[RMDB]
RNA sequence: GGGAACGACUCGAGUAGAGUCGAAAAGAUAUGGAAUAGUGUAGACAUGCUUAUAGGUCGGAAACGACCUUUAAGCAACAGCUACCUAUUCCUAAGUCAAAUCUAAGACAGUUCGCUGUCUUAGAAAGUACACGGAAUGGUUCGCCAUUCCGUGUACAAAAGAAACAACAACAACAAC
Reactivity to DMS in 0.01 (KOAc 150mM, MgCl2 10mM, bicine 150mM(pH8.5), 24C), signal-to-noise 1, nucleotides 027 to 126: g020a030u000a020u020g000g000a020a020u000a000g010u010g000u000a000g000a010c040a140u010g000c000u000u000a010u000a000g020g030u000c000g000g000a000a000a050c010g000a000c000c000u000u000u000a000a020g030c010a120a020c300a200g000c000u000a000c000c000u000a000u000u010c000c000u000a010a070g000u000c000a150a150a180u000c000u000a020a000g010a000c000a010g000u000u010c240g070c010u000g010u040c000u000u000a000g000a060a060a090
Reactivity to 2A3 in 0.01 (KOAc 150mM, MgCl2 10mM, bicine 150mM(pH8.5), 24C), signal-to-noise 1, nucleotides 027 to 126: g020a000u020a000u040g010g000a010a000u010a000g090u110g010u200a020g040a040c140a300u300g050c000u020u020a000u000a010g020g000u000c000g010g030a020a010a000c010g020a020c000c000u040u000u010a000a010g010c010a000a000c000a000g000c000u010a000c010c000u000a000u000u000c000c010u000a000a000g010u010c000a050a000a190u040c000u020a010a010g000a000c020a000g020u090u140c290g050c260u000g000u000c000u000u000a020g010a020a000a020

Chemical mapping of a 177-nucleotide RNA with DMS and 2A3. Conditions: 150 mM KOAc, 10 mM MgCl2 and 150 mM bicine (pH 8.5), 24 C. Reactivities are given for positions 27 through 126. As a SHAPE reagent, 2A3 marks flexible, mostly unpaired nucleotides at the ribose 2'-OH. The 2A3 profile rests on 2,868 reads.